[RMDB]
RNA sequence: GGGAACGACUCGAGUAGAGUCGAAAAGGUUCAUCACUUCGGUGAUGAACCAAAAAGCGUACUACGUGUGGGGGAGAGCAGGAUCCCAAAUAGGAUCCGCUCGACGAUCCGUAACAUCACGUAUCGCAAAAAAGACGGCGUAUUCGUACGCCGUCAAGUCGUAGUAAUUGUUCGCAAUUACUACGACAAAAGAAACAACAACAACAAC
Reactivity to DMS in 0.01 (KOAc 150mM, MgCl2 10mM, bicine 150mM(pH8.5), 24C), signal-to-noise 1, nucleotides 027 to 156: g020g030u000u030c000a000u010c000a030c010u010u050c300g040g000u000g050a000u000g020a000a010c000c000a000a030a030a110a100g000c030g030u000a090c070u010a050c010g060u010g020u000g000g020g010g030g000a300g030a040g010c060a160g170g010a010u000c000c000c000a040a180a160u000a070g010g010a010u000c010c000g000c010u000c000g000a120c110g000a050u000c010c020g060u000a050a170c040a100u000c020a020c010g000u000a030u030c020g070c030a000a050a100a100a100a100g010a020c000g020g000c000g030u000a070u000u010c300g060u000a020c000g020c000c010g020u010c000a010a020
Reactivity to 2A3 in 0.01 (KOAc 150mM, MgCl2 10mM, bicine 150mM(pH8.5), 24C), signal-to-noise 4, nucleotides 027 to 156: g020g000u000u020c010a000u000c000a000c030u030u120c300g030g000u030g000a000u000g010a000a000c000c000a000a010a010a010a010g030c030g020u100a070c040u000a000c020g000u010g010u020g010g000g000g020g000a020g000a010g000c150a190g000g010a030u020c020c010c040a160a270a070u300a070g000g000a010u000c010c010g030c000u010c010g050a070c030g000a000u000c010c020g060u100a120a100c050a120u200c000a010c000g010u010a030u290c150g010c090a130a010a000a010a000a050g000a000c000g000g010c000g000u000a020u020u110c240g040u050a010c000g020c000c000g000u000c000a000a000